[RMDB]
RNA sequence: GGGAACGACUCGAGUAGAGUCGAAAAAUAAAGAACUGGAGCGUCGUGGACACAGCUUCUGCCGCUACGCAGACGACUGCAACAUCUACGUAAGCAGCCGGAAAGCGGGCGACCAUCUGCUGAAGAAAGGUAAAUCAAGGUUCGCCUUGAUUUACCUAAAAGAAACAACAACAACAAC
Reactivity to 2A3 in 0.01 (KOAc 150mM, MgCl2 10mM, bicine 150mM(pH8.5), 24C), signal-to-noise 1, nucleotides 027 to 126: a010u230a050a100a020g070a060a050c040u050g090g020a050g040c010g030u030c030g010u050g060g060a010c020a000c010a070g020c020u020u050c040u050g000c020c030g020c040u030a100c050g000c010a000g030a070c010g050a050c040u040g000c010a030a030c000a120u140c040u120a030c090g000u000a100a070g000c000a010g040c030c030g000g000a080a000a000g000c020g050g010g000c020g010a010c000c010a070u000c030u060g040c000u020g020a040a010g110a200a130
Reactivity to DMS in 0.01 (KOAc 150mM, MgCl2 10mM, bicine 150mM(pH8.5), 24C), signal-to-noise 2, nucleotides 027 to 126: a090u010a050a060a150g000a070a080c120u010g000g000a070g000c030g030u020c070g030u010g000g000a070c110a110c100a030g000c020u000u000c080u010g000c000c040g020c070u010a080c060g020c000a020g030a290c050g000a010c050u000g000c050a170a120c040a150u000c160u000a090c140g020u040a110a200g010c000a010g010c000c030g010g010a040a250a090g000c060g000g000g000c020g010a150c070c080a040u020c060u000g000c050u000g010a100a060g010a040a060

Structure probing data (2A3 and DMS) for a 177-nucleotide construct. Values are in units of 0.01, from 0 to 300, in steps of 10. For DMS the reverse transcriptase was MarathonRT. For 2A3 the reverse transcriptase was SuperScript II with manganese. The RNA was probed in 150 mM KOAc, 10 mM MgCl2 and 150 mM bicine (pH 8.5) at 24 C. In probing experiments dimethyl sulfate is read out at A N1 and C N3, which are open when not base-paired. Values cover nucleotides 27 to 126.